[RMDB]
RNA sequence: GGGAACGACUCGAGUAGAGUCGAAAAGACACGACGGAGACGUCGUGUCAAAGAGUGGGAAACCACUCAAAGAGCCACAGCUUCGGCUGUGGCUCAAGGCGCGGCAUAGUCCGCGGAACAAACCGAAGGAGUAAUUAGUGUUCGCACUAAUUACUCCAAAAGAAACAACAACAACAAC
Reactivity to DMS in 0.01 (KOAc 150mM, MgCl2 10mM, bicine 150mM(pH8.5), 24C), signal-to-noise 2, nucleotides 027 to 126: g010a010c000a000c000g030a030c000g000g010a280g030a290c000g050u000c000g030u010g010u000c000a020a040a100g000a020g000u000g010g000g020a170a140a200c010c000a010c000u040c000a060a110a100g020a030g010c000c000a020c050a000g000c030u000u020c300g030g000c010u000g020u000g030g020c000u000c000a020a060g000g000c010g040c000g030g000c000a210u010a150g010u000c000c000g000c000g000g000a110a070c150a030a030a080c050c010g010a160a130
Reactivity to 2A3 in 0.01 (KOAc 150mM, MgCl2 10mM, bicine 150mM(pH8.5), 24C), signal-to-noise 1, nucleotides 027 to 126: g000a000c000a010c000g010a000c010g000g030a080g020a050c000g000u010c000g000u000g000u000c000a010a000a000g000a000g000u010g000g000g000a020a040a050c010c010a000c000u000c000a030a070a000g000a000g000c010c010a010c000a000g080c030u120u180c300g090g020c010u000g020u000g010g010c000u000c020a000a000g000g000c010g000c010g000g050c060a190u150a130g030u060c000c000g020c000g000g010a030a040c060a060a100a020c040c030g080a110a050